Source information
Chemical mapping of a 177-nucleotide RNA with DMS and 2A3. For DMS the reverse transcriptase was MarathonRT. High 2A3 reactivity points to a flexible backbone, as in loops and unpaired stretches.
[RMDB]
RNA sequence: GGGAACGACUCGAGUAGAGUCGAAAAGCCCGAAAGUUCGCUUUCGGGCAAAAGAAAGCACCUGCGGGAGCAAAGCACACGCAGAAAAACAGUGCAAAAGCAAAAGUACCGUGUUCGCACGGUACAACAGGUACUAUAACUUCGGUUAUAGUACCUGAAAAGAAACAACAACAACAAC
Reactivity to DMS in 0.01 (KOAc 150mM, MgCl2 10mM, bicine 150mM(pH8.5), 24C), signal-to-noise 2, nucleotides 027 to 126: g020c000c000c000g010a000a020a010g040u000u000c240g060c010u000u000u000c000g050g010g000c000a010a000a030a060g010a090a200a170g000c070a020c060c000u010g000c010g000g000g010a100g010c020a060a100a160g020c080a080c000a070c020g000c010a000g010a070a070a040a040a040c130a130g010u000g000c000a090a060a070a090g000c090a070a030a060a130g000u000a010c000c000g010u000g000u010u020c220g020c000a010c000g020g000u000a010c000a060a100
Reactivity to 2A3 in 0.01 (KOAc 150mM, MgCl2 10mM, bicine 150mM(pH8.5), 24C), signal-to-noise 3, nucleotides 027 to 126: g000c010c000c030g000a020a000a020g020u130u210c210g030c170u000u010u010c000g000g000g030c000a000a000a000a020g000a010a110a000g010c020a000c030c000u000g000c010g020g040g030a140g040c070a220a170a040g030c010a030c000a010c040g000c000a000g150a110a060a010a010a000c020a000g010u010g010c000a080a040a000a020g040c030a030a060a060a050g000u000a010c000c000g000u000g020u020u040c150g020c080a010c000g000g010u000a000c000a000a010